[RMDB]
RNA sequence: GGGAACGACUCGAGUAGAGUCGAAAAGUUCGGUGAGGCUCCUAUGCAAACACAGGCCACUGCCCAAAAAUGUCCAAAGACGCCAAUGGGUAGAACAGGGAUUGUCGGAUUAAGGCUUUCCAUAAUGAAAACAAAGUAUGCUUCGGCAUACUUUGAACCUUUUAAGGUUGUUCGCAACCUUAAAAGGAAAAGAAACAACAACAACAAC
Reactivity to DMS in 0.01 (KOAc 150mM, MgCl2 10mM, bicine 150mM(pH8.5), 24C), signal-to-noise 1, nucleotides 027 to 156: g030u000u000c110g030g010u020g040a120g030g020c000u010c040c000u010a100u000g010c030a140a070a080c020a070c030a060g000g010c000c010a160c070u000g010c000c040c020a010a060a090a050a130u000g010u000c040c070a190a110a200g010a130c010g000c010c040a070a290u000g030g040g010u020a060g010a060a110c060a130g020g000g020a060u000u000g000u010c030g000g050a160u000u000a120a090g000g060c030u000u000u000c010c020a160u000a060a050u010g020a120a090a090a150c000a010a010a010g000u000a000u000g000c040u000u000c240g090g020c010a000u000a010c010u030u000u000g000a110a110
Chemical mapping of a 207-nucleotide RNA with DMS. The data come from the RNA Mapping Database (RMDB), library M2RFPK. Values cover nucleotides 27 to 156.